Structure probing data (2A3 and DMS) for a 177-nucleotide construct. For DMS, 15,703 sequencing reads were counted. For 2A3, 10,005 sequencing reads were counted. For 2A3 the reverse transcriptase was SuperScript II with manganese. Source: RMDB library OK2TST, as collected in RNAgym. DMS (dimethyl sulfate) methylates the pairing face of unpaired adenines and cytosines. 2A3 is a SHAPE reagent: it acylates the 2'-hydroxyl of flexible nucleotides of all four kinds. For DMS the reverse transcriptase was MarathonRT.

RNA sequence: GGGAACGACUCGAGUAGAGUCGAAAAAGGAGUAUGAACAGAGGGUGGUCAAACGAAUUCAGUCUCUAGCCAGCUCUAGGACUGACAGAGAUGCCUGGCAGGACAAUGCAUUAAGGAUUGCAGAGCACAAAUCACUUUCAUUCGUGAAAGUGAUUUGAAAAGAAACAACAACAACAAC
Reactivity to 2A3 in 0.01 (KOAc 150mM, MgCl2 10mM, bicine 150mM(pH8.5), 24C), signal-to-noise 5, nucleotides 027 to 126: a000g070g020a040g010u100a060u170g040a080a000c030a040g050a080g070g010g050u060g010g020u050c030a090a080a020c060g040a050a040u090u020c010a010g020u000c070u010c010u190a020g010c020c090a030g020c050u000c000u070a020g010g040a040c020u020g010a010c030a010g100a000g010a010u080g020c000c020u010g030g000c020a010g000g020a030c040a040a050u060g030c010a000u090u090a110a050g090g030a040u040u060g030c030a010g020a030g090c030a000
Reactivity to DMS in 0.01 (KOAc 150mM, MgCl2 10mM, bicine 150mM(pH8.5), 24C), signal-to-noise 9, nucleotides 027 to 126: a060g010g010a070g020u010a060u000g010a080a090c090a060g010a080g000g010g030u000g020g010u000c060a050a090a090c120g010a120a110u010u000c030a040g010u000c010u010c020u000a050g000c060c090a090g020c150u000c020u000a040g000g000a060c030u000g000a030c210a050g000a100g000a070u000g000c090c020u000g010g020c040a050g000g000a060c060a050a080u000g000c040a060u000u000a060a080g000g000a080u000u000g010c040a040g000a110g010c150a160